[RMDB]
RNA sequence: GGGAACGACUCGAGUAGAGUCGAAAAAGGUUAUUAAGCCUGGUAUAUCACUUACUGACUUUGAGGCUAUUUUUGGAUCGCAACCCACUUUGCGUGCCAUACGCAAUUUGGUUUGUGAGCGCAACGCAAUGUCGACGCAGUUCGCUGCGUCGACAUUAAAAGAAACAACAACAACAAC
Reactivity to 2A3 in 0.01 (KOAc 150mM, MgCl2 10mM, bicine 150mM(pH8.5), 24C), signal-to-noise 1, nucleotides 027 to 126: a000g190g010u220u050a140u230u090a140a040g020c010c000u040g010g090u130a090u020a010u110c030a030c100u070u240a050c020u030g120a000c010u130u100u110g080a100g050g000c050u070a210u020u090u020u010u120g090g000a040u070c010g050c000a000a020c000c000c000a000c000u010u000u010g000c000g010u030g100c080c130a300u240a260c000g000c010a000a010u020u000u000g050g000u040u000u010g000u020g000a040g000c090g050c000a050a050c030g050c120
Reactivity to DMS in 0.01 (KOAc 150mM, MgCl2 10mM, bicine 150mM(pH8.5), 24C), signal-to-noise 2, nucleotides 027 to 126: a070g010g010u010u000a060u010u000a050a060g010c020c020u010g010g010u000a090u010a130u020c070a090c180u000u000a050c050u000g010a020c050u000u010u010g010a060g010g030c070u000a040u000u000u010u020u010g020g000a120u000c010g010c000a040a000c050c000c010a010c000u000u000u010g000c020g010u000g000c300c240a130u010a040c000g010c000a000a000u000u000u000g000g000u000u000u000g010u000g020a020g010c070g020c130a030a070c220g020c180

An RNA of 177 nucleotides, treated with 2A3 and DMS and read out base by base. DMS adducts were read by reverse transcription with MarathonRT. The RNA was probed in 150 mM KOAc, 10 mM MgCl2 and 150 mM bicine (pH 8.5) at 24 C. It was measured as part of the RMDB library OK2TRN. For 2A3, 821 sequencing reads were counted.